Description:
Structure probing data (DMS and 2A3) for a 177-nucleotide construct. Reactivities are given for positions 27 through 126. The RNA was probed in 150 mM KOAc, 10 mM MgCl2 and 150 mM bicine (pH 8.5) at 24 C. For 2A3 the reverse transcriptase was SuperScript II with manganese.
RNA sequence: GGGAACGACUCGAGUAGAGUCGAAAAGAUAUGGAAUGUUGAGAGGGUCGGACAUUCGAUGAAAGGAAGAUCGGAAACGAUCUUCCUGGAGAAUGUCGGCGCCUAGCUCUUCAACAUUCCUAAGUCACUCCAUUGUUAGGUUCGCCUAACAAUGGAGAAAAGAAACAACAACAACAAC
Reactivity to DMS in 0.01 (KOAc 150mM, MgCl2 10mM, bicine 150mM(pH8.5), 24C), signal-to-noise 1, nucleotides 027 to 126: g010a040u000a000u000g000g000a050a010u000g010u000u000g000a060g020a010g000g030g030u000c040g050g030a010c010a000u000u010c020g000a120u020g000a210a270a010g020g030a020a010g010a000u000c000g030g000a010a030a060c000g000a000u000c000u000u000c000c000u000g000g010a030g010a020a010u000g000u000c020g010g000c090g030c230c160u000a140g000c010u020c000u000u010c000a020a000c000a030u000u010c000c000u010a000a030g000u010c020a300
Reactivity to 2A3 in 0.01 (KOAc 150mM, MgCl2 10mM, bicine 150mM(pH8.5), 24C), signal-to-noise 2, nucleotides 027 to 126: g000a000u000a010u030g000g000a000a020u030g000u030u030g020a080g030a030g120g130g040u150c160g160g000a000c010a030u000u020c030g300a300u010g000a010a010a000g000g010a000a000g000a010u040c000g000g010a000a000a010c010g020a010u000c020u010u000c000c010u000g010g010a000g020a000a000u000g000u020c020g000g030c060g110c020c010u120a140g110c000u000c000u300u210c030a000a000c010a020u000u020c020c000u010a020a000g000u030c010a020